[RMDB]
RNA sequence: GGGAACGACUCGAGUAGAGUCGAAAAGAAACGAUGGUUGGCUAAGCCUGGUCGGACAUCAGGAGGUUAGUGCACUCGCAUAAGCCAACUUGACAACAAAAAGGAAAAAGAAAGAAGAAAAAGAAAAAUCAUGAGCAGUAUUCGUACUGCUCAUGAUAAAAGAAACAACAACAACAAC
Reactivity to DMS in 0.01 (KOAc 150mM, MgCl2 10mM, bicine 150mM(pH8.5), 24C), signal-to-noise 4, nucleotides 027 to 126: g010a070a110a080c100g040a080u020g000g000u000u000g010g000c000u010a070a170g000c000c000u000g030g050u010c140g020g000a300c150a040u010c020a010g020g000a110g000g000u020u040a120g020u000g010c010a160c150u010c250g000c030a040u030a100a040g020c000c000a010a000c010u000u030g000a280c220a040a110c110a030a100a060a080a030g020g000a010a080a050a070a110g010a050a020a090g000a030a110g000a060a040a030a060a090g020a010a020a040a020
Reactivity to 2A3 in 0.01 (KOAc 150mM, MgCl2 10mM, bicine 150mM(pH8.5), 24C), signal-to-noise 4, nucleotides 027 to 126: g080a020a110a000c050g060a080u050g030g000u000u000g000g000c020u030a050a060g070c000c000u000g000g050u060c120g070g060a040c020a060u040c010a010g000g010a020g130g070u080u140a060g010u070g010c010a060c150u200c130g000c020a020u030a130a000g000c010c000a000a000c000u010u030g050a020c020a020a000c010a010a140a000a010a030g120g050a080a100a020a030a010g120a080a030a020g100a110a020g100a010a090a020a010a000g130a020a150a020a020